The data come from the RNA Mapping Database (RMDB), library ARCHII. An RNA of 207 nucleotides, treated with DMS and 2A3 and read out base by base. DMS adducts were read by reverse transcription with MarathonRT.
RNA sequence: GGGAACGACUCGAGUAGAGUCGAAAAGGAGGCGUGAGGAAUCCGUCUCUCUGUCUGGUGCGGCAAUGUAGUUCUGGGUCCCUUAGGGGCUCCACCUUCACCGCUGUUAGGGGAGUUUUAUCCAGCAUCAGCAAAGGUGACCCGUGAUGGAGGCGGCCACCAUGUAUACGUUCGCGUAUACAUGGUGAAAAGAAACAACAACAACAAC
Reactivity to DMS in 0.01 (KOAc 150mM, MgCl2 10mM, bicine 150mM(pH8.5), 24C), signal-to-noise 1, nucleotides 027 to 156: g010g020a050g050g030c000g010u020g000a050g020g040a150a100u000c010c000g050u000c010u000c000u000c020u000g010u000c040u000g020g030u000g020c030g020g040c040a070a050u010g020u010a050g010u000u000c050u010g010g020g000u000c000c000c010u000u000a120g020g020g010g000c020u000c020c020a000c040c030u000u010c010a050c030c070g020c080u000g000u000u000a120g030g040g010g000a130g010u000u010u010u010a110u010c010c020a130g010c000a060u010c030a050g030c060a040a060a060g020g010u010g010a090c010c010c020g010u020g000a110u010g020g000a120g010g000c050g010g000c080
Reactivity to 2A3 in 0.01 (KOAc 150mM, MgCl2 10mM, bicine 150mM(pH8.5), 24C), signal-to-noise 2, nucleotides 027 to 156: g070g010a000g010g010c060g020u230g030a070g060g100a070a140u020c000c000g030u010c010u000c000u030c010u020g090u000c040u040g030g020u060g030c060g010g010c090a050a080u140g010u110a100g040u070u130c050u070g030g000g010u050c020c040c000u090u110a180g060g000g000g000c030u080c030c000a110c000c000u060u070c080a100c080c100g030c070u040g040u120u170a070g000g000g080g000a030g020u030u080u220u130a080u040c020c010a030g010c030a050u060c040a030g020c000a010a060a020g040g020u050g040a170c020c020c020g020u030g040a060u090g020g030a030g010g000c000g010g000c000
The RNA was probed in 150 mM KOAc, 10 mM MgCl2 and 150 mM bicine (pH 8.5) at 24 C. 2A3 adducts were read by reverse transcription with SuperScript II with manganese.